[RMDB]
RNA sequence: GGGAACGACUCGAGUAGAGUCGAAAAGAAAAAUCAGGCUGUUCUUUGGUGGGGAAGGCCAUUAACAUCCAUCAAGUUCAUAAAAAUUCUCUGCGUUAUGGCCAGUUUGAGAAUGCAUGAUAAUACAUAUGUUUUCAGACCUUUUUUAAGUAGCAAACCUAUAGGCUACUUUCGAGUAGCCUAUAGGAAAAGAAACAACAACAACAAC
Reactivity to DMS in 0.01 (KOAc 150mM, MgCl2 10mM, bicine 150mM(pH8.5), 24C), signal-to-noise 1, nucleotides 027 to 156: g010a050a070a100a060a100u010c020a050g010g090c020u000g020u020u000c060u010u000u010g020g020u010g040g010g020g040a140a100g000g000c010c020a040u020u000a050a060c040a090u010c010c010a020u010c030a060a080g000u000u010c090a120u010a020a100a090a130a080u010u000c030u000c030u000g010c070g040u000u000a020u000g020g000c000c050a070g010u000u000u020g000a040g010a040a010u010g020c060a020u010g030a080u000a100a170u010a170c020a030u000a030u010g080u000u000u000u000c000a010g000a030c010c020u000u000u000u000u030u000a040a130g010u000a090g000c080a100a110a220
Reactivity to 2A3 in 0.01 (KOAc 150mM, MgCl2 10mM, bicine 150mM(pH8.5), 24C), signal-to-noise 4, nucleotides 027 to 156: g020a010a050a010a000a010u120c050a010g080g000c030u030g030u070u000c030u050u120u050g000g000u000g000g020g010g020a040a040g010g000c000c000a010u020u060a020a030c000a030u000c010c000a010u030c010a050a040g020u060u050c050a020u190a140a130a040a050a060u110u030c030u040c040u060g010c020g070u050u050a010u020g010g000c000c000a010g010u040u080u090g000a010g010a020a010u040g020c020a010u030g050a050u090a190a030u090a150c030a020u070a030u080g030u030u030u000u020c020a030g020a090c000c000u050u070u060u050u100u150a190a110g020u070a020g010c050a110a030a020
About this RNA: This 207-nucleotide RNA was probed chemically with DMS and 2A3. The 2A3 profile rests on 3,472 reads. Conditions: 150 mM KOAc, 10 mM MgCl2 and 150 mM bicine (pH 8.5), 24 C. The DMS profile rests on 2,162 reads. Reactivities are given for positions 27 through 156. 2A3 adducts were read by reverse transcription with SuperScript II with manganese.